[RMDB]
RNA sequence: GGGAACGACUCGAGUAGAGUCGAAAACAUAGACUAUUAAUUUGCUAACUACUUAUCUUCUGAAUCUAAGGACUACUCAAUUUCAUAAGAGUUGGGUGUAUUGGUGAUGCUUUGAAUGGACUCCGUGACGUGGAAACAGUUUCGACUGUUUCCACGUAAAAGAAACAACAACAACAAC
Reactivity to 2A3 in 0.01 (KOAc 150mM, MgCl2 10mM, bicine 150mM(pH8.5), 24C), signal-to-noise 2, nucleotides 027 to 126: c010a040u130a020g030a040c000u030a050u190u130a120a160u090u090u090g040c010u020a010a110c010u090a030c000u030u110a040u120c030u130u000c040u090g060a140a030u010c020u080a160a000g040g040a040c020u040a000c000u080c010a040a080u050u170u010c110a180u180a150a080g020a010g020u030u000g070g000g000u040g030u000a160u040u080g050g020u030g020a020u040g000c040u000u050u070g040a030a070u000g000g030a000c000u000c000c030g030u020g010
Reactivity to DMS in 0.01 (KOAc 150mM, MgCl2 10mM, bicine 150mM(pH8.5), 24C), signal-to-noise 2, nucleotides 027 to 126: c030a110u010a090g010a060c080u030a090u000u000a050a060u010u000u000g010c020u010a160a090c090u010a060c070u000u000a080u010c070u000u000c040u000g010a110a080u000c080u000a060a050g000g010a080c100u000a030c000u000c050a040a020u000u020u000c020a150u010a080a170g000a020g000u000u000g010g010g040u000g030u000a060u000u000g000g020u000g000a120u000g010c060u000u000u010g020a040a060u010g020g000a050c060u000c050c030g010u000g010
An RNA of 177 nucleotides, treated with 2A3 and DMS and read out base by base. The reactions ran in a buffer of 150 mM KOAc, 10 mM MgCl2 and 150 mM bicine (pH 8.5), at 24 C. For DMS, 1,321 sequencing reads were counted. Source: RMDB library OK2TRN, as collected in RNAgym. The 2A3 profile rests on 970 reads.